The record gives the reactivity of an RNA of 207 nucleotides to DMS and 2A3. The RNA was probed in 150 mM KOAc, 10 mM MgCl2 and 150 mM bicine (pH 8.5) at 24 C. DMS adducts were read by reverse transcription with MarathonRT.
RNA sequence: GGGAACGACUCGAGUAGAGUCGAAAAAAGACGUGUUAUCGGAAGUGCCACGACGCCCAGAAUUAUGGACUGGUACAUAUACAUCGACAAAUAUGAUGCGAGUUGUGAUGGGAACACGCCCAAUGGUUGUAUUGGGUCUAAGCGUCAGUAAAUACAACAACGCUUGUAGGUUCGCCUACAAGCGUUGAAAAGAAACAACAACAACAAC
Reactivity to DMS in 0.01 (KOAc 150mM, MgCl2 10mM, bicine 150mM(pH8.5), 24C), signal-to-noise 2, nucleotides 027 to 156: a100a050g050a060c030g010u000g000u000u010a060u000c070g030g000a150a180g000u020g020c010c000a070c030g000a110c170g000c030c020c010a170g000a060a070u000u000a090u000g000g010a130c010u010g050g000u000a020c000a040u020a180u010a040c010a100u000c040g020a180c040a060a100a090u000a110u000g030a050u000g000c010g010a110g030u000u020g020u000g000a120u000g000g000g010a040a070c020a070c030g010c000c000c000a020a110u000g000g050u000u010g000u000a070u000u000g030g040g010u000c030u010a050a100g020c070g060u010c000a130g000u020a080a040a210u060a110c050a070a170
Reactivity to 2A3 in 0.01 (KOAc 150mM, MgCl2 10mM, bicine 150mM(pH8.5), 24C), signal-to-noise 3, nucleotides 027 to 156: a010a010g060a000c030g020u040g000u030u010a070u120c060g080g010a050a060g020u010g040c010c000a040c030g110a070c010g040c020c000c000a010g050a110a110u260u240a120u190g020g010a000c000u020g020g020u030a010c010a010u160a000u020a040c010a050u080c100g110a050c140a030a190a040u200a080u140g070a030u090g050c040g030a010g040u070u060g060u150g040a040u040g000g000g000a040a020c020a010c000g000c000c000c020a000a010u010g090g010u000u020g010u070a000u010u010g000g000g000u000c010u040a020a020g020c000g020u000c000a010g010u110a020a120a090u190a020c040a090a000
Values cover nucleotides 27 to 156. The data come from the RNA Mapping Database (RMDB), library OK3TST. The DMS profile rests on 2,649 reads.